[RMDB]
RNA sequence: GGGAACGACUCGAGUAGAGUCGAAAAAAAGCUUUAGGGGUUUCCCUGAAUUUGAGGGUCUUGCUCAACACACAUUCAAGAUCAAAUGCGUGUCAAACUAGAUGGUUAUAUGCGGUUACGCCAAGCCGCUUUCAUGAACUUUCGAGUUCAUGAAAGCAAAAGAAACAACAACAACAAC
Reactivity to 2A3 in 0.01 (KOAc 150mM, MgCl2 10mM, bicine 150mM(pH8.5), 24C), signal-to-noise 1, nucleotides 027 to 126: a000a000a000g130c100u210u160u040a100g010g170g050g000u070u050u070c030c010c000u020g080a170a060u130u050u090g040a090g010g020g030u060c030u010u040g000c010u000c070a060a020c020a000c000a010c000a030u080u080c030a060a060g030a220u090c050a070a170a050u040g000c000g020u110g050u060c020a030a060a000c030u010a000g000a030u110g060g020u170u120a180u010a080u200g010c000g040g020u020u040a060c030g000c030c000a030a000g030c010c010
Reactivity to DMS in 0.01 (KOAc 150mM, MgCl2 10mM, bicine 150mM(pH8.5), 24C), signal-to-noise 2, nucleotides 027 to 126: a020a060a110g000c050u000u000u000a070g010g000g000g000u000u000u000c000c000c010u000g000a080a060u010u010u010g020a130g020g010g010u000c050u000u010g000c060u000c070a070a020c040a020c020a060c030a010u000u000c080a080a060g000a040u020c140a100a050a060u000g020c060g040u000g020u000c120a070a080a060c070u000a060g000a060u000g010g000u010u000a090u000a060u010g020c020g000g010u010u010a070c140g000c040c110a050a070g000c030c050
An RNA of 177 nucleotides, treated with 2A3 and DMS and read out base by base. For DMS the reverse transcriptase was MarathonRT. Source: RMDB library OK2TST, as collected in RNAgym. Conditions: 150 mM KOAc, 10 mM MgCl2 and 150 mM bicine (pH 8.5), 24 C. 2A3 is a SHAPE reagent: it acylates the 2'-hydroxyl of flexible nucleotides of all four kinds.